[RMDB]
Record summary:
Chemical mapping of a 207-nucleotide RNA with DMS and 2A3. The RNA was probed in 150 mM KOAc, 10 mM MgCl2 and 150 mM bicine (pH 8.5) at 24 C. For 2A3 the reverse transcriptase was SuperScript II with manganese.
RNA sequence: GGGAACGACUCGAGUAGAGUCGAAAAAAGUAGAGAAUCAUCCUAUCCAUCCUGACUGUCGGAUCGGUGCGGACUAAAACCAAAGACAGAAACUAAACAUGUAGAUUCAUGAGCGUAAUGCUGGCGGACGCGGGUUCAACUCCCGCCAUCUCCACCACACACAGAGUACGUUCGCGUACUCUGUGUGAAAAGAAACAACAACAACAAC
Reactivity to DMS in 0.01 (KOAc 150mM, MgCl2 10mM, bicine 150mM(pH8.5), 24C), signal-to-noise 1, nucleotides 027 to 156: a150a090g020u010a070g010a060g010a100a070u000c030a040u000c030c040u000a270u000c020c030a080u010c000c010u010g000a200c100u000g000u010c110g000g000a070u000c080g090g000u000g040c110g040g010a090c070u000a050a040a080a070c030c010a020a080a300g010a150c060a100g000a120a060a100c040u010a120a090a100c040a040u000g030u000a110g010a070u020u000c050a090u000g010a130g030c070g020u000a070a090u010g030c060u000g040g020c010g040g010a010c100g000c000g000g010g000u000u010c150a090a290c130u010c010c000c010g040c010c070a010u010c000u000c010c000a010c040c000a240
Reactivity to 2A3 in 0.01 (KOAc 150mM, MgCl2 10mM, bicine 150mM(pH8.5), 24C), signal-to-noise 4, nucleotides 027 to 156: a000a010g160u150a060g030a040g050a080a100u150c050a030u020c060c010u020a010u010c010c000a020u020c000c010u070g040a050c010u040g030u020c000g000g010a030u030c050g000g020u010g040c030g010g010a020c040u080a060a040a030a060c020c020a030a020a000g010a010c010a000g000a100a050a010c130u160a060a120a000c000a030u040g020u070a040g040a290u110u210c020a040u090g030a010g030c030g060u110a120a030u170g060c060u040g040g030c020g020g010a010c030g010c010g000g000g020u070u120c030a010a010c030u010c010c010c000g000c000c000a040u000c010u000c010c010a030c030c000a030
The data come from the RNA Mapping Database (RMDB), library ARCHII. In probing experiments dimethyl sulfate is read out at A N1 and C N3, which are open when not base-paired.